[RMDB]
Annotation:
An RNA of 177 nucleotides, treated with DMS and 2A3 and read out base by base. 2A3 adducts were read by reverse transcription with SuperScript II with manganese. For DMS, 7,381 sequencing reads were counted.
RNA sequence: GGGAACGACUCGAGUAGAGUCGAAAAGAUAUGGACCCUUUGGUGGAGAUGCGGUGUCGGAAACGACACCCAUCGUUGAAACCACUGAGGGUCCUAAGUCAAAGUUGUGAACCUUCGGGUUCACAACGCCGUACUUAAACUUCGGUUUAAGUACGGCAAAAGAAACAACAACAACAAC
Reactivity to DMS in 0.01 (KOAc 150mM, MgCl2 10mM, bicine 150mM(pH8.5), 24C), signal-to-noise 4, nucleotides 027 to 126: g010a010u000a020u010g000g000a020c000c000c000u000u010u010g090g000u000g010g010a090g000a010u000g000c290g030g020u000g020u010c000g010g000a010a010a020c010g010a000c000a000c000c000c000a010u000c010g020u010u010g000a200a160a180c010c000a010c010u010g010a010g000g000g000u000c000c000u000a000a050g000u000c000a140a120a150g000u000u000g010u000g010a010a000c010c000u000u010c280g030g020g030u000u000c000a000c000a000a010c020
Reactivity to 2A3 in 0.01 (KOAc 150mM, MgCl2 10mM, bicine 150mM(pH8.5), 24C), signal-to-noise 2, nucleotides 027 to 126: g000a000u010a000u050g000g000a000c010c020c000u060u090u270g080g010u050g030g080a290g010a040u010g060c200g110g020u000g010u000c000g000g010a020a000a000c000g000a000c000a000c000c000c000a000u000c000g000u010u090g050a150a090a030c010c010a000c010u010g010a010g010g010g010u000c000c000u000a010a000g000u010c030a140a090a140g000u010u020g010u010g000a010a010c000c000u030u070c300g120g010g000u000u000c000a000c000a000a000c020